The data come from the RNA Mapping Database (RMDB), library OK1LIB. The record gives the reactivity of an RNA of 177 nucleotides to DMS and 2A3. The RNA was probed in 150 mM KOAc, 10 mM MgCl2 and 150 mM bicine (pH 8.5) at 24 C. Reactivities are given for positions 27 through 126. For DMS the reverse transcriptase was MarathonRT.

RNA sequence: GGGAACGACUCGAGUAGAGUCGAAAAACAUUUCGAAGAGAUCAUCAGUUGAUGAGCAGCAUUGUGUUUUAUAUACUUAACGAAAUUCCUUCGAAGUGGAAUGCGUUAUAGGACUUAUGUAAUAGAACGUAGUCAUCGCAUUCGUGCGAUGACUACGAAAAGAAACAACAACAACAAC
Reactivity to DMS in 0.01 (KOAc 150mM, MgCl2 10mM, bicine 150mM(pH8.5), 24C), signal-to-noise 2, nucleotides 027 to 126: a000c000a020u000u000u000c030g000a040a000g000a160g010a150u000c180a040u000c120a180g010u030u060g000a090u020g000a040g000c120a160g000c210a150u010u000g000u020g070u000u020u080u000a050u010a200u120a130c000u000u010a050a060c120g000a060a140a050u040u000c010c010u000u040c030g010a040a050g050u000g010g000a000a010u000g010c070g000u000u000a090u040a060g000g000a040c050u000u010a150u090g020u050a020a160u020a160g000a020a120
Reactivity to 2A3 in 0.01 (KOAc 150mM, MgCl2 10mM, bicine 150mM(pH8.5), 24C), signal-to-noise 2, nucleotides 027 to 126: a010c000a030u040u020u090c030g030a050a000g080a000g030a020u000c000a000u000c060a050g290u100u200g110a110u010g000a050g110c020a000g000c100a210u080u130g010u020g060u040u030u020u020a080u000a030u010a030c040u050u080a010a000c000g070a140a000a000u020u060c000c000u030u090c020g030a080a060g040u150g030g020a040a050u010g050c130g030u000u060a120u070a080g050g020a000c000u050u010a000u170g050u060a050a080u050a120g060a010a000